[RMDB]
RNA sequence: GGGAACGACUCGAGUAGAGUCGAAAAUUGUACACCUUCGGGUGUACAAGCUGUCUAGUCGCUAGCAAACGAUCAAAGCUAGCGACUAGACAUUAUUGAUCGCGACGUGCGCUUUCGAGCGCACGAAUCUCAAAGUGUAGUUCGCUACACUUUGAGAAAAAGAAACAACAACAACAAC
Reactivity to 2A3 in 0.01 (KOAc 150mM, MgCl2 10mM, bicine 150mM(pH8.5), 24C), signal-to-noise 2, nucleotides 027 to 126: u000u000g000u010a020c010a020c020c020u020u060c290g110g000g000u000g000u000a000c000a000a020g010c020u010g010u000c000u020a000g000u000c000g000c020u000a000g000c000a070a070a170c160g200a120u190c110a130a100a000g000c000u000a000g000c000g000a000c000u000a010g000a000c020a000u010u000a020u010u040g060a020u160c050g030c030g130a110c010g060u000g010c010g000c030u100u130u110c300g060a010g000c000g020c000a020c000g000a000a000
Reactivity to DMS in 0.01 (KOAc 150mM, MgCl2 10mM, bicine 150mM(pH8.5), 24C), signal-to-noise 5, nucleotides 027 to 126: u000u000g010u000a000c010a000c000c000u000u010c260g020g010g030u000g010u000a000c000a000a010g000c250u000g000u000c000u000a010g000u000c000g010c000u010a000g000c010a050a150a130c190g020a110u010c130a080a120a130g000c010u000a000g000c000g010a000c000u000a000g000a000c000a010u010u010a060u000u000g010a050u010c100g020c160g010a210c030g010u000g000c000g010c000u000u000u010c140g000a030g010c010g000c000a000c010g000a020a060